Structure probing data (2A3 and DMS) for a 177-nucleotide construct.
DMS adducts were read by reverse transcription with MarathonRT.
Values are in units of 0.01, from 0 to 300, in steps of 10.
RNA sequence: GGGAACGACUCGAGUAGAGUCGAAAAACAGCGGGUGGCGAGGCGCUGCAGCACGACGCGCCACUUACGCAGCCGAGCCGCCAGCACGGCACAGAGUCGCUAGUCGGUAGAGCAGCGUGCGUGAAAGACUCACGGGAUUAUUCGUAAUCCCGUGAGUAAAAGAAACAACAACAACAAC
Reactivity to 2A3 in 0.01 (KOAc 150mM, MgCl2 10mM, bicine 150mM(pH8.5), 24C), signal-to-noise 3, nucleotides 027 to 126: a000c030a010g030c020g030g040g020u060g000g000c010g020a040g000g050c010g000c050u120g020c030a060g080c000a030c040g110a000c010g000c030g020c010c010a030c000u050u050a050c020g040c070a010g010c020c000g010a000g030c030c010g070c030c000a020g000c010a010c000g010g010c060a040c020a080g080a070g080u050c020g040c000u040a070g060u060c030g050g080u090a050g010a020g020c040a000g000c030g040u070g010c000g000u040g040a060a090a030g080
Reactivity to DMS in 0.01 (KOAc 150mM, MgCl2 10mM, bicine 150mM(pH8.5), 24C), signal-to-noise 3, nucleotides 027 to 126: a070c100a140g000c080g010g000g000u030g000g020c030g000a150g010g010c030g000c050u010g040c080a120g040c100a130c040g010a050c070g010c040g000c010c050a000c020u020u030a030c130g030c040a070g000c000c030g000a140g000c010c060g030c060c120a100g000c070a100c020g000g000c000a210c080a100g010a080g040u000c100g000c050u000a040g020u020c000g000g020u000a070g010a170g000c020a010g010c000g050u010g000c070g020u000g000a090a050a140g010